[RMDB]
RNA sequence: GGGAACGACUCGAGUAGAGUCGAAAACCCAAACCCCGCAAGGCCCGGAAGGGAGCAGCGGUAGGGGCCACGGAGCACGCUCGCGGGGGUGCGGGGAUGAGGUAGGCCCUGGUGAAAGGAGGCGGUGGAGGGUUCCCACCCUCGGGCGUGCCCGCCGGUACUAUUCGAAGUUCGCUUCGAAUAGUACAAAAGAAACAACAACAACAAC
Reactivity to 2A3 in 0.01 (KOAc 150mM, MgCl2 10mM, bicine 150mM(pH8.5), 24C), signal-to-noise 1, nucleotides 027 to 156: c020c000c000a060a090a070c020c000c000c000g040c040a050a100g060g010c000c010c040g080g080a020a140g090g010g000a040g010c000a010g040c020g030g010u120a140g040g010g050g090c020c020a070c050g030g000a070g010c000a000c000g020c000u030c040g260c130g020g000g000g000g000u000g010c050g070g000g040g030a040u120g040a020g050g000u160a020g060g050c000c090c030u020g050g050u190g080a160a090a060g050g030a110g040g030c160g020g080u100g080g130a180g040g000g000u040u040c010c000c000a020c000c000c040u020c040g030g000g000c000g000u000g030c000c000c000g000c000c000g040